Record summary: This 177-nucleotide RNA was probed chemically with 2A3 and DMS. Values are in units of 0.01, from 0 to 300, in steps of 10. It was measured as part of the RMDB library OK1LIB. The RNA was probed in 150 mM KOAc, 10 mM MgCl2 and 150 mM bicine (pH 8.5) at 24 C. Values cover nucleotides 27 to 126.
RNA sequence: GGGAACGACUCGAGUAGAGUCGAAAAUCACAAAGCGGAUUUAGCUCGGUUGGGAGAGGUCCAGACCGAAGAUCUGGUUGUCCUGUGAGCGACCCACAGAAUUCGCACCAUAAACAACGGGAGAUUCGCUGGUAGUAUCAUUCGUGAUACUACCAGCAAAAGAAACAACAACAACAAC
Reactivity to 2A3 in 0.01 (KOAc 150mM, MgCl2 10mM, bicine 150mM(pH8.5), 24C), signal-to-noise 5, nucleotides 027 to 126: u070c020a010c040a100a170a020g040c070g030g000a010u010u040u070a050g000c010u000c030g140g000u180u150g050g040g010a110g010a050g030g110u060c000c000a000g030a020c010c090g210a080a020g030a130u000c010u010g000g000u020u060g100u050c010c000u060g030u080g040a010g020c010g040a090c020c000c000a050c030a010g080a010a030u060u010c020g000c040a050c010c020a040u170a150a180a030c080a050a020c070g030g040g000a090g040a100u080u090c040
Reactivity to DMS in 0.01 (KOAc 150mM, MgCl2 10mM, bicine 150mM(pH8.5), 24C), signal-to-noise 4, nucleotides 027 to 126: u030c050a110c110a070a120a100g000c010g000g030a010u000u000u000a130g010c060u000c030g000g020u030u040g000g010g010a030g000a120g010g030u000c010c000a030g010a020c000c100g000a070a070g000a300u000c000u010g000g000u040u010g020u010c020c040u010g020u020g000a040g000c040g030a110c070c040c070a070c220a090g010a040a030u010u010c020g000c060a190c070c040a080u020a090a060a070c160a040a080c110g000g000g020a180g000a080u010u000c100